[RMDB]
RNA sequence: GGGAACGACUCGAGUAGAGUCGAAAAUGCUCGUUGAGAACCUUGAAAGUCGAGGCUCCCAGUCAGAAUUUUAGGUACCUGCCUGUUGACCUCUGGCUCUAGGAUGUGUGUUUUAGAAACCUGUAUCCAUCCUACCAUGGUUCGCCAUGGUAGGAUGAAAAGAAACAACAACAACAAC
Reactivity to 2A3 in 0.01 (KOAc 150mM, MgCl2 10mM, bicine 150mM(pH8.5), 24C), signal-to-noise 1, nucleotides 027 to 126: u060g000c000u030c050g090u110u190g080a040g000a180a040c010c030u060u050g160a300a140a030g060u060c010g000a010g000g000c100u000c020c020c010a000g070u050c020a030g020a180a100u030u140u200u220a270g090g000u100a080c000c000u010g070c000c010u040g000u190u110g060a080c000c000u000c020u110g000g000c010u010c010u040a030g000g050a150u040g020u000g010u020g050u120u060u030u030a050g110a010a090a060c000c030u030g010u150a020u000c010
Reactivity to DMS in 0.01 (KOAc 150mM, MgCl2 10mM, bicine 150mM(pH8.5), 24C), signal-to-noise 3, nucleotides 027 to 126: u000g010c010u010c030g010u000u010g000a120g000a070a080c020c000u000u010g000a140a180a100g010u000c050g000a040g010g030c090u000c060c230c020a060g020u010c070a040g000a090a080u000u010u010u000a110g020g020u000a120c160c050u000g010c040c010u000g010u010u010g000a120c050c020u000c040u000g020g000c020u010c030u000a050g010g010a060u000g010u000g000u000g010u000u000u000u000a110g010a070a080a090c020c040u000g010u000a130u000c110

Annotation:
Structure probing data (2A3 and DMS) for a 177-nucleotide construct. Values cover nucleotides 27 to 126. 2A3 adducts were read by reverse transcription with SuperScript II with manganese. The DMS profile rests on 2,603 reads.